[RMDB]
RNA sequence: GGGAACGACUCGAGUAGAGUCGAAAAGAUAUGGAAUCGAAGGUGCGUACACGAAGAACUCGGAAACGAGGGAGUGUACGACCCACCUAAGAUUCCUAAGUCAAAUCUGCCCGUUCGCGGGCAGAAACUAAUCUUGGGAGUUCGCUCCCAAGAUUAGAAAAGAAACAACAACAACAAC
Reactivity to DMS in 0.01 (KOAc 150mM, MgCl2 10mM, bicine 150mM(pH8.5), 24C), signal-to-noise 2, nucleotides 027 to 126: g000a060u000a300u000g000g000a010a000u000c000g000a300a030g000g020u000g020c020g020u000a000c000a010c000g000a060a160g000a100a140c020u000c000g010g000a070a060a180c000g020a020g000g000g000a030g010u000g010u000a010c000g020a070c290c300c010a000c000c000u010a000a300g020a010u000u000c020c000u000a020a070g000u010c040a050a130a080u000c010u000g000c000c000c000g030u000u010c170g020c020g000g030g020c000a000g000a000a020a180
Reactivity to 2A3 in 0.01 (KOAc 150mM, MgCl2 10mM, bicine 150mM(pH8.5), 24C), signal-to-noise 2, nucleotides 027 to 126: g010a010u090a050u180g000g000a010a010u020c000g000a060a030g000g000u010g020c010g000u000a000c000a010c010g260a300a080g050a080a030c000u020c000g030g030a080a040a020c010g010a010g000g010g010a060g000u000g000u000a010c020g000a010c000c010c000a010c000c000u010a010a010g010a000u000u000c000c010u010a110a020g030u000c030a000a000a280u010c010u010g000c020c030c030g010u060u090c300g020c010g080g000g110c010a010g000a000a000a000